[RMDB]
RNA sequence: GGGAACGACUCGAGUAGAGUCGAAAAUGUCUUCUGCAUAGUUCACCAGGAACACUUCUGUUACAGUGAACAUCAGGUAUAUACCAAGACAGUAGAGUAGUAGAUAGUGUCGAUUCAUCAUAGGCUGGAGCUAGCAGUUAUUCGUAACUGCUAGCUCAAAAGAAACAACAACAACAAC
Reactivity to DMS in 0.01 (KOAc 150mM, MgCl2 10mM, bicine 150mM(pH8.5), 24C), signal-to-noise 2, nucleotides 027 to 126: u000g030u010c020u000u000c020u010g010c160a060u000a130g030u000u010c020a030c020c060a170g010g000a040a040c040a070c290u010u010c160u020g010u000u000a020c060a150g000u000g030a050a010c030a090u000c040a060g000g010u010a110u020a060u020a120c070c050a040a030g010a060c060a100g010u000a060g000a110g000u010a050g010u000a040g020a060u000a040g030u000g000u000c020g020a090u000u020c070a050u000c060a020u020a050g000g000c070u000g010
Reactivity to 2A3 in 0.01 (KOAc 150mM, MgCl2 10mM, bicine 150mM(pH8.5), 24C), signal-to-noise 2, nucleotides 027 to 126: u030g010u040c040u120u000c000u070g050c040a080u060a050g040u020u000c000a030c020c040a100g110g080a060a000c040a020c140u200u220c130u150g030u060u000a010c040a040g000u020g110a040a040c000a020u040c010a000g000g150u010a120u010a000u010a280c050c030a020a000g070a020c060a020g050u110a000g000a030g030u080a000g030u000a030g050a100u050a040g080u090g080u070c030g030a040u170u000c030a190u030c030a050u080a040g110g000c050u060g070

Notes
An RNA of 177 nucleotides, treated with DMS and 2A3 and read out base by base. For 2A3, 1,235 sequencing reads were counted. For 2A3 the reverse transcriptase was SuperScript II with manganese. For DMS the reverse transcriptase was MarathonRT. Source: RMDB library OK2TRN, as collected in RNAgym. The reactions ran in a buffer of 150 mM KOAc, 10 mM MgCl2 and 150 mM bicine (pH 8.5), at 24 C. As a SHAPE reagent, 2A3 marks flexible, mostly unpaired nucleotides at the ribose 2'-OH.